RNA sequence: GGGAACGACUCGAGUAGAGUCGAAAAAGGUUGCCUAAGGAGGGGUGAACCGGCCCAGGUCGGAAACGGAGCAGGUCAAAACUCCCGUGCUGAUCAGUAGUGUCAGGCUGGAGGAUCGCUUGAGUCCAGGACCUGUGCAACAUAGCGAGACCCCGUCGUGGAUUAAGAACUUCGGUUCUUAAUCCACAAAAGAAACAACAACAACAAC
Reactivity to 2A3 in 0.01 (KOAc 150mM, MgCl2 10mM, bicine 150mM(pH8.5), 24C), signal-to-noise 1, nucleotides 027 to 156: a040g000g000u010u030g050c010c050u040a080a080g080g060a010g040g050g000g020u020g050a020a020c000c010g010g030c010c010c000a020g000g000u010c020g170g120a070a020a070c080g050g010a030g030c060a050g050g060u110c050a000a060a000a300c000u010c000c000c020g060u210g220c010u000g020a010u060c090a050g300u300a020g020u210g010u140c020a000g050g000c010u020g000g000a090g020g050a020u000c010g020c000u060u080g050a090g070u000c030c050a050g000g140a020c010c000u000g000u000g000c010a070a130c020a100u100a050g160c020g000a030g030a120c030c000c000c020g000u030c090

An RNA of 207 nucleotides, treated with 2A3 and read out base by base. Source: RMDB library RSTRND, as collected in RNAgym. Reactivities are rounded to 0.1 and cut off at 0 and 3. High 2A3 reactivity points to a flexible backbone, as in loops and unpaired stretches. For 2A3 the reverse transcriptase was SuperScript II with manganese.